[RMDB]
RNA sequence: GGGAACGACUCGAGUAGAGUCGAAAACUGCGCGUGUUGCAGGAGGGUGGGUGAUGGUCUCGAUCUCUUGUAUUUAGAGAUGGGGUGCCCUUGGUUAGGCAGGUUGUGUAUUCUCUGGGGGCGCGUGCGAUAUAUAAAUUUUCGAAUUUAUAUAUCGAAAAGAAACAACAACAACAAC
Reactivity to 2A3 in 0.01 (KOAc 150mM, MgCl2 10mM, bicine 150mM(pH8.5), 24C), signal-to-noise 2, nucleotides 027 to 126: c000u020g010c030g000c010g040u090g050u100u120g050c030a000g000g040a030g030g020g050u110g010g020g020u050g030a080u050g020g030u010c010u000c020g040a020u000c000u010c000u000u050g090u210a170u150u280u120a000g000a000g000a010u010g000g000g000g000u030g020c000c020c000u040u060g080g000u150u100a070g010g000c040a010g000g010u090u040g000u000g000u020a190u140u030c070u000c020u040g020g010g000g000g020c000g000c000g000u000g010

This 177-nucleotide RNA was probed chemically with 2A3. Source: RMDB library OK1LIB, as collected in RNAgym. Reactivities are given for positions 27 through 126.